[RMDB]
RNA sequence: GGGAACGACUCGAGUAGAGUCGAAAACGGAUUCGGACCCUACGGCGUGACGCCGGUAAAUCCGGCACAGCUCACCGCCGAAGAGCUGGAUGGUCGCACCAUCGCCGGCGCAACGGUCAUCUCGCGGAUACCCCUCUAUCUUCGGAUAGAGGGGUAUAAAAGAAACAACAACAACAAC
Reactivity to 2A3 in 0.01 (KOAc 150mM, MgCl2 10mM, bicine 150mM(pH8.5), 24C), signal-to-noise 5, nucleotides 027 to 126: c020g020g030a060u090u090c030g050g000a070c020c000c010u050a070c060g020g000c020g020u030g050a040c080g000c000c000g000g000u030a060a060a020u110c010c000g010g000c020a040c040a080g020c020u000c010a050c050c100g040c020c010g040a060a030g020a010g010c030u020g020g040a050u030g040g040u050c050g000c070a110c110c000a020u040c040g050c060c020g040g010c040g020c050a020a070c030g000g020u020c010a040u030c060u040c010g020c010g030g000
Reactivity to DMS in 0.01 (KOAc 150mM, MgCl2 10mM, bicine 150mM(pH8.5), 24C), signal-to-noise 4, nucleotides 027 to 126: c060g000g000a070u010u010c020g000g000a170c020c000c020u020a140c100g020g010c010g020u000g010a090c100g030c020c000g010g020u010a040a180a160u010c000c000g010g010c040a130c090a080g010c040u000c020a060c050c070g000c020c020g010a100a060g020a040g010c030u000g000g010a050u010g010g000u030c110g030c080a300c040c010a050u020c070g000c040c010g000g010c050g000c050a070a080c140g000g000u030c030a050u000c020u000c140g010c030g010g000

Conditions: 150 mM KOAc, 10 mM MgCl2 and 150 mM bicine (pH 8.5), 24 C. The record gives the reactivity of an RNA of 177 nucleotides to 2A3 and DMS. Values are in units of 0.01, from 0 to 300, in steps of 10. Source: RMDB library OK1LIB, as collected in RNAgym. For 2A3 the reverse transcriptase was SuperScript II with manganese.